[RMDB]
RNA sequence: GGGAACGACUCGAGUAGAGUCGAAAAUAAGCCUCGAAACCGCUUGUGUCCAUGCUCGCGGUGUAGAGUCACUAUCAUGGAAUCGCGCUGGACGGCUGCCUGUCAGUCCGGCACUAGAACACAACAGGCUGGUUCCCGGAUGCGCUUCGCGCACCGUUACAGAGUAACCGUUCGCGGUUACUCUGUAAAAAGAAACAACAACAACAAC
Reactivity to 2A3 in 0.01 (KOAc 150mM, MgCl2 10mM, bicine 150mM(pH8.5), 24C), signal-to-noise 1, nucleotides 027 to 156: u110a030a010g130c020c000u040c000g060a110a020a000c000c000g030c000u020u040g000u000g020u060c000c010a010u020g000c010u000c000g020c000g070g000u040g000u020a010g000a000g020u000c040a070c210u150a180u300c000a010u000g000g000a010a030u040c040g000c010g000c000u000g030g000a010c000g000g010c000u040g000c010c020u040g000u020c000a000g000u000c000c010g000g060c000a000c000u000a000g070a130a030c090a020c040a100a000c000a000g000g000c000u020g170g000u050u070c050c020c090g000g040a180u040g000c010g030c030u210u100c290g020c000g000c010a000c010c000g000u000
An RNA of 207 nucleotides, treated with 2A3 and read out base by base. For 2A3 the reverse transcriptase was SuperScript II with manganese. The reactions ran in a buffer of 150 mM KOAc, 10 mM MgCl2 and 150 mM bicine (pH 8.5), at 24 C. Source: RMDB library ARCHII, as collected in RNAgym.